The record gives the reactivity of an RNA of 177 nucleotides to DMS and 2A3. For DMS the reverse transcriptase was MarathonRT.
RNA sequence: GGGAACGACUCGAGUAGAGUCGAAAACUGUUCUUUAGCAUUACGAAAUGCUGACGUUUACCAAUUAUGUUCAACUCCAAAAGUGGAUGAAAGAUCAGAUUACUCAUCAAUAGGUAUUGAAGACAUAUGAAUCCAUGCAAUUCGUUGCAUGGAUUCAAAAAGAAACAACAACAACAAC
Reactivity to DMS in 0.01 (KOAc 150mM, MgCl2 10mM, bicine 150mM(pH8.5), 24C), signal-to-noise 3, nucleotides 027 to 126: c060u010g000u000u010c100u000u010u000a020g010c010a000u000u000a130c300g000a150a060a020u000g010c010u010g000a090c040g010u000u000u000a110c030c040a150a140u010u010a020u000g020u020u000c010a030a080c110u030c000c010a020a120a100a150g040u000g000g020a050u000g010a030a030a130g000a080u000c140a060g000a190u000u010a060c060u020c010a080u010c040a070a030u000a100g000g010u040a080u000u000g000a040a100g010a090c070a020u000a040
Reactivity to 2A3 in 0.01 (KOAc 150mM, MgCl2 10mM, bicine 150mM(pH8.5), 24C), signal-to-noise 2, nucleotides 027 to 126: c010u030g060u110u050c040u030u050u050a010g000c000a040u020u080a110c100g100a200a090a010u010g000c000u000g010a010c040g020u010u040u060a180c050c040a050a110u130u030a070u090g050u000u030c010a080a090c000u000c070c000a070a070a100a110g170u060g120g000a030u040g050a070a060a020g060a060u050c030a010g020a120u040u090a060c010u010c050a020u010c010a030a120u030a100g110g000u020a000u010u050g040a050a010g080a030c000a020u070a010
The DMS profile rests on 1,734 reads. It was measured as part of the RMDB library OK2TST.